The record gives the reactivity of an RNA of 170 nucleotides to 2A3 and DMS. DMS adducts were read by reverse transcription with MarathonRT. 2A3 adducts were read by reverse transcription with SuperScript II with manganese. The 2A3 profile rests on 60,171 reads.
RNA sequence: GGGAACGACUCGAGUAGAGUCGAAAAUCUUUUCCUUUCCUCGUCCUCCCCGGUCAGCCUCCAGAGUUCCUCUUCUUCUUCCUUGCUGAGGCUCUUUCCCCCUGCGGAGAGCUGCUUCUUCUUGUUCCGACGUAACGGUUCGCCGUUACGAAAAGAAACAACAACAACAAC
Reactivity to 2A3 in 0.01 (KOAc 150mM, MgCl2 10mM, bicine 150mM(pH8.5), 24C), signal-to-noise 9, nucleotides 027 to 129: u040c010u030u070u020u050c010c000u040u050u040c010c010u040c010g070u030c000c010u030c000c010c000c000g010g010u040c030a020g040c000c010u020c020c010a030g020a010g070u060u030c000c000u030c000u030u010c000u040u000c000u030u040c010c000u020u050g020c030u030g040a050g040g000c000u000c000u030u040u040c010c000c000c000c030u050g020c060g030g010a020g000a010g030c050u040g020c010u030u020c000u040u010c010u020u070g050u050u000c030c010g020a050
Reactivity to DMS in 0.01 (KOAc 150mM, MgCl2 10mM, bicine 150mM(pH8.5), 24C), signal-to-noise 8, nucleotides 027 to 129: u030c030u030u020u010u000c030c000u000u000u000c040c020u000c060g000u030c030c010u030c030c020c010c010g000g000u000c060a130g020c020c010u030c020c010a030g040a120g030u000u000c010c010u030c020u010u020c000u010u020c030u020u020c020c000u000u000g020c030u000g000a110g000g000c040u010c020u010u020u020c000c010c010c120c070u040g010c050g030g010a060g000a040g020c080u000g010c060u000u000c000u010u010c060u000u000g000u000u000c020c030g020a280